[RMDB]
RNA sequence: GGGAACGACUCGAGUAGAGUCGAAAAGAUAUGGAUGUACGAAGUCAAGCCAUUCGUUUGACGGAGCCUCGGAAACGAGGCUCCCGAGAAUGGAACUACUUGCCGAGUACAUCCUAAGUCAAACGAAUUACAAUCACUUCGGUGAUUGUAAUUCGAACACCAGAGCUAGCUUCGGCUAGCUCUGGUGAAAAGAAACAACAACAACAAC
Reactivity to 2A3 in 0.01 (KOAc 150mM, MgCl2 10mM, bicine 150mM(pH8.5), 24C), signal-to-noise 1, nucleotides 027 to 156: g020a010u050a010u070g000g010a000u000g010u000a000c010g060a130a030g110u160c030a010a000g030c020c020a020u030u030c060g250u200u120u180g060a070c050g000g000a000g000c000c000u010c010g020g010a000a010a010c000g000a000g010g000c000u000c010c000c000g070a060g000a000a000u000g000g010a020a010c030u100a030c020u200u000g000c010c030g050a050g030u000a010c000a020u000c000c000u000a010a000g010u020c050a040a070a080c020g010a000a000u000u000a000c000a000a000u000c000a000c000u020u100c260g180g000u000g000a000u000u000g000u000a000a000u000u000c000g000a010a010